[RMDB]
RNA sequence: GGGAACGACUCGAGUAGAGUCGAAAACGGCGGGGCUGACGAGGCCUCGAUCAAUGGCCUCACGCACGACGGUUGCGACCGGGACGCCUCGCUCGCGCGCCACCGCGGUGAUGCGGCGGUGGCACUCCGGGUAGUCCAUUUUCGAAUGGACUACCCGAAAAGAAACAACAACAACAAC
Reactivity to DMS in 0.01 (KOAc 150mM, MgCl2 10mM, bicine 150mM(pH8.5), 24C), signal-to-noise 1, nucleotides 027 to 126: c060g020g000c010g030g020g000g000c010u010g060a240c100g010a010g000g040c030c010u050c170g030a070u000c260a170a220u000g000g000c000c000u000c030a180c020g050c020a040c090g000a170c070g000g050u040u000g060c100g020a030c020c030g000g000g020a280c300g010c000c010u000c000g020c000u000c020g000c080g000c100g020c000c000a000c000c020g010c000g000g050u000g000a230u010g000c000g000g010c010g000g050u000g000g010c010a000c030u010c070
Reactivity to 2A3 in 0.01 (KOAc 150mM, MgCl2 10mM, bicine 150mM(pH8.5), 24C), signal-to-noise 1, nucleotides 027 to 126: c040g010g020c000g000g000g040g010c020u020g080a040c030g000a000g010g000c000c000u040c030g010a040u060c000a000a170u150g000g000c000c010u000c010a010c050g070c010a020c020g190a010c030g090g000u080u010g040c100g050a010c010c050g060g080g040a010c040g030c010c020u010c000g010c000u050c030g110c000g000c030g010c000c000a000c000c010g000c050g000g050u220g080a170u300g300c020g100g000c000g000g060u000g000g000c000a000c020u020c020
Conditions: 150 mM KOAc, 10 mM MgCl2 and 150 mM bicine (pH 8.5), 24 C. Chemical mapping of a 177-nucleotide RNA with DMS and 2A3. The DMS profile rests on 726 reads. The 2A3 profile rests on 1,179 reads. High DMS reactivity at an A or C suggests that its Watson-Crick edge is free. 2A3 adducts were read by reverse transcription with SuperScript II with manganese. For DMS the reverse transcriptase was MarathonRT.